[RMDB]
RNA sequence: GGGAACGACUCGAGUAGAGUCGAAAAGAUAUGGACGUCCCUAGCUAGCUUCGUGUCGGAAACGACACCGAGCUUGGACCUAGGACGUCCUAAGUCAAAGACUGAUACCAGUUCGCUGGUAUCAGUCGAAAGGCAGCAGGUUCGCCUGCUGCCUUUCAAAAGAAACAACAACAACAAC
Reactivity to DMS in 0.01 (KOAc 150mM, MgCl2 10mM, bicine 150mM(pH8.5), 24C), signal-to-noise 3, nucleotides 027 to 126: g000a040u010a300u000g010g020a010c000g010u000c130c050c050u010a020g000c090u000a040g010c000u050u000c300g010u010g000u020c010g030g000a030a080a190c010g000a000c010a000c000c120g010a000g010c000u000u010g000g000a110c300c030u000a020g020g000a040c010g000u000c000c000u000a000a070g010u000c020a140a080a210g010a010c000u000g000a000u000a010c010c000a000g000u010u000c220g020c000u000g010g000u010a000u000c000a010g000u000c010
Reactivity to 2A3 in 0.01 (KOAc 150mM, MgCl2 10mM, bicine 150mM(pH8.5), 24C), signal-to-noise 1, nucleotides 027 to 126: g040a010u070a010u100g010g000a000c000g000u100c160c060c000u000a040g040c090u050a010g000c000u000u000c030g020u000g000u000c000g010g080a080a050a050c010g000a010c010a000c010c020g010a000g000c000u020u180g170g100a090c030c000u000a010g010g010a000c000g000u000c000c000u000a050a010g040u000c020a100a200a150g000a000c010u010g010a000u000a000c010c000a020g050u070u140c300g140c160u000g000g000u000a000u000c010a000g000u000c000
Structure probing data (DMS and 2A3) for a 177-nucleotide construct. The RNA was probed in 150 mM KOAc, 10 mM MgCl2 and 150 mM bicine (pH 8.5) at 24 C. Reactivities are given for positions 27 through 126. The 2A3 profile rests on 3,446 reads. The DMS profile rests on 2,003 reads.